[RMDB]
RNA sequence: GGGAACGACUCGAGUAGAGUCGAAAAGAAAGAAAGAAAGAAGCCGGCUCUGCUAGUUUCACGGCAACCACGUUGAAAUUACAACGAAAGAAGCUCGCACUCAACUUCAAUGGCUUAACGAGUGCAAAAAAGAAGUAUCACUUCGGUGAUACUUCAACGUAGCUUAAAUGUUCGCAUUUAAGCUACGAAAAGAAACAACAACAACAAC
Reactivity to 2A3 in 0.01 (KOAc 150mM, MgCl2 10mM, bicine 150mM(pH8.5), 24C), signal-to-noise 2, nucleotides 027 to 156: g080a020a070a000g090a060a120a030g070a050a200a010g060a060a030g140c110c070g010g000c030u030c050u080g010c010u010a010g050u030u030u130c140a080c030g020g020c030a040a080c010c000a050c030g000u010u020g080a110a120a100u280u180a100c050a060a000c030g010a040a080a060g020a010a000g030c130u200c290g000c020a000c000u000c010a000a060c000u030u010c050a040a130u090g020g000c010u020u030a040a000c040g000a000g000u010g000c010a040a020a060a000a030a000g010a000a000g000u000a010u000c000a010c010u030u050c180g010g020u010g000a000u000a000c000u000u010c000a010a000
Chemical mapping of a 207-nucleotide RNA with 2A3. The RNA was probed in 150 mM KOAc, 10 mM MgCl2 and 150 mM bicine (pH 8.5) at 24 C. Values cover nucleotides 27 to 156. As a SHAPE reagent, 2A3 marks flexible, mostly unpaired nucleotides at the ribose 2'-OH.